An RNA of 177 nucleotides, treated with DMS and 2A3 and read out base by base. DMS adducts were read by reverse transcription with MarathonRT.
[RMDB]
RNA sequence: GGGAACGACUCGAGUAGAGUCGAAAACAGAGUGUGAGUCUCUCUGACUCUCAGUGUGUCACUCACACAGUCUCACUCAGAGACUGUCUCACAGAGACUCUCUGAGUGACACAGAGACACUGUCAGACAGAUCACCUACCUUCGGGUAGGUGAUCUGAAAAGAAACAACAACAACAAC
Reactivity to DMS in 0.01 (KOAc 150mM, MgCl2 10mM, bicine 150mM(pH8.5), 24C), signal-to-noise 1, nucleotides 027 to 126: c140a130g020a110g010u000g000u000g000a050g000u010c150u000c000u010c010u000g000a050c020u000c060u010c040a060g050u010g000u020g000u010c010a060c000u000c000a050c030a020c040a120g000u000c120u000c000a020c060u000c020a030g000a000g000a060c300u010g000u000c000u000c000a230c260a200g000a020g010a000c010u000c010u010c020u000g000a020g030u000g000a020c090a040c040a100g000a060g000a020c050a010c060u000g000u000c130a020g010a300
Reactivity to 2A3 in 0.01 (KOAc 150mM, MgCl2 10mM, bicine 150mM(pH8.5), 24C), signal-to-noise 1, nucleotides 027 to 126: c020a000g050a030g080u030g010u010g000a010g030u010c010u000c000u000c000u130g040a040c000u050c000u010c090a010g020u040g040u000g030u200c030a020c020u010c000a000c040a010c010a030g030u010c010u020c020a010c010u010c010a000g020a040g020a100c130u110g000u030c000u000c000a300c010a100g050a000g000a020c010u000c000u000c010u000g000a020g000u000g000a000c010a000c000a010g100a000g000a030c000a000c050u060g010u090c010a000g000a090
Source: RMDB library OK2TRN, as collected in RNAgym.